[RMDB]
RNA sequence: GGGAACGACUCGAGUAGAGUCGAAAAACGUCCGGCUACGGCCGGACGAAUGUUGAAAGGGGAAAGGAACCCAAUCAACAAAUAUAAUGCGAGUAAGGAAUCGCAAGCACCUGGUACGCCAGGUGCAACCAAUGAACGGGUUCGCCCGUUCAUUGGUAAAAGAAACAACAACAACAAC
Reactivity to DMS in 0.01 (KOAc 150mM, MgCl2 10mM, bicine 150mM(pH8.5), 24C), signal-to-noise 2, nucleotides 027 to 126: a130c030g040u020c020c020g060g000c000u010a140c170g020g000c010c000g000g030a000c000g010a050a000u040g000u000u000g010a000a040a300g010g020g000g000a050a100a260g060g000a070a100c020c000c000a070a230u000c000a000a050c000a040a150a120u030a070u060a200a070u070g010c000g000a000g000u060a130a080g000g000a200a060u000c000g000c000a060a120g060c000a050c020c010u000g000g020u080a150c230g000c000c000a000g000g000u000g000c000a030
Reactivity to 2A3 in 0.01 (KOAc 150mM, MgCl2 10mM, bicine 150mM(pH8.5), 24C), signal-to-noise 4, nucleotides 027 to 126: a000c000g000u010c000c030g010g000c010u060a110c300g140g020c000c000g020g000a000c000g000a000a030u070g000u000u000g020a030a010a030g050g010g000g030a050a140a190g180g050a100a100c010c000c000a010a020u000c000a010a000c010a000a020a000u180a000u030a040a150u070g000c000g000a020g070u130a160a110g200g030a160a110u000c010g000c020a000a020g010c000a010c000c000u010g010g010u060a060c260g050c040c000a000g000g000u000g000c000a000